[RMDB]
RNA sequence: GGGAACGACUCGAGUAGAGUCGAAAAGUCCAGCACCGGAAACAGGAGCUCGUCUCCUUCCUUUCCACCGCUGGCUCCACAUCCGAUCGUCGCUUCUUCCUUCGCGACCUGAGAUAGAAACUACCUGGUGGAUACAACUCUUGGGUUGUUCCUCCCACGUUUAAGUCUUGUUCGCAAGACUUAAACGAAAAGAAACAACAACAACAAC
Reactivity to DMS in 0.01 (KOAc 150mM, MgCl2 10mM, bicine 150mM(pH8.5), 24C), signal-to-noise 1, nucleotides 027 to 156: g020u010c030c030a070g020c010a270c150c120g070g000a050a000a060c060a060g000g010a070g040c020u000c300g020u000c010u000c000c000u000u010c090c040u020u000u000c010c000a230c100c050g050c010u010g020g000c040u030c010c070a080c110a190u000c040c070g040a090u010c040g060u000c020g000c080u000u010c070u010u000c140c100u010u000c100g000c010g070a020c030c050u000g020a130g070a100u010a060g010a210a030a120c070u010a080c090c000u000g060g020u020g000g000a100u000a040c050a030a010c070u000c020u010u010g040g000g000u000u000g000u000u000c000c000u020c040c030c100a260
Reactivity to 2A3 in 0.01 (KOAc 150mM, MgCl2 10mM, bicine 150mM(pH8.5), 24C), signal-to-noise 6, nucleotides 027 to 156: g040u030c000c010a000g000c000a020c050c120g020g010a060a050a090c300a300g000g000a000g000c060u130c280g300u100c080u000c000c000u010u030c000c000u000u000u000c000c000a020c010c100g000c000u000g000g000c000u020c010c000a060c020a040u050c040c050g080a090u100c050g030u010c000g010c020u150u030c020u180u140c150c020u180u200c080g000c010g020a020c000c010u080g090a100g020a060u120a060g140a060a120a040c040u080a080c050c090u100g040g010u020g020g010a040u040a100c050a050a030c020u020c010u060u110g050g000g000u010u000g000u010u010c010c010u020c020c020c010a050
The data come from the RNA Mapping Database (RMDB), library VIROID. Chemical mapping of a 207-nucleotide RNA with DMS and 2A3. The 2A3 profile rests on 5,363 reads. For 2A3 the reverse transcriptase was SuperScript II with manganese.